The record gives the reactivity of an RNA of 207 nucleotides to 2A3. 2A3 adducts were read by reverse transcription with SuperScript II with manganese. The data come from the RNA Mapping Database (RMDB), library OK3TST. The RNA was probed in 150 mM KOAc, 10 mM MgCl2 and 150 mM bicine (pH 8.5) at 24 C.
[RMDB]
RNA sequence: GGGAACGACUCGAGUAGAGUCGAAAAUCAGAUCUAUGGAUGAAGACACCUACAAAGCCUGUUGCCUGCGAUGUUUACAGUUCGUCUUCAGUAUAAUAAACUUUCUCCACGAAGAUGUCAAGCCUCGUGACUGGCUUCACUACGUCUCUUAAUGAUGGCCUCCCUACAUAUUCGUAUGUAGGGAGGCAAAAGAAACAACAACAACAAC
Reactivity to 2A3 in 0.01 (KOAc 150mM, MgCl2 10mM, bicine 150mM(pH8.5), 24C), signal-to-noise 1, nucleotides 027 to 156: u080c030a020g040a050u000c000u220a100u180g030g000a050u070g000a020a000g010a000c000a050c070c060u090a080c100a090a220a030g060c060c000u100g090u170u050g010c010c030u040g080c070g050a060u080g100u030u050u140a060c100a030g000u050u080c000g050u010c030u000u010c000a000g040u040a110u010a190a110u100a180a040a020c020u080u090u070c080u000c040c060a070c130g000a000a000g040a100u090g020u050c030a000a000g000c010c000u000c020g010u020g040a010c010u040g030g000c000u100u010c010a030c060u220a030c030g020u000c000u000c080u200u280a200a120u300g110a070u180g100